[RMDB]
An RNA of 207 nucleotides, treated with 2A3 and read out base by base. It was measured as part of the RMDB library RSTRND. The reactions ran in a buffer of 150 mM KOAc, 10 mM MgCl2 and 150 mM bicine (pH 8.5), at 24 C.
RNA sequence: GGGAACGACUCGAGUAGAGUCGAAAAUGGAUUUGCCAAGGUCAACGAAAUUUAUAUAGCAUAUCUUGGUUAUGCAAGUAAAAACAUCGAGGUUAUAAUAACCGGAAAUAAAAAACAAACUGCAACAAAUACAAAAGAUUUUACUGGACAAACUCCACGUGAUUAUGAUGUUCGCAUCAUAAUCACGAAAAGAAACAACAACAACAAC
Reactivity to 2A3 in 0.01 (KOAc 150mM, MgCl2 10mM, bicine 150mM(pH8.5), 24C), signal-to-noise 1, nucleotides 027 to 156: u100g000g000a000u000u010u010g000c000c000a050a020g000g000u050c000a070a000c080g080a040a040a170u150u300u020a050u010a080u110a140g000c040a060u050a070u190c020u040u040g030g010u060u030a010u070g030c000a160a000g040u130a000a100a000a060a000c030a010u040c130g030a120g080g030u030u040a040u060a300a070u040a060a040c000c020g000g030a000a070a010u090a060a050a020a000a000a000c030a000a060a000c030u080g010c050a070a000c000a100a080a020u130a080c010a000a230a060a000g040a070u050u060u110u050a030c010u040g000g000a020c000a020a060a000c040u000c000c010a010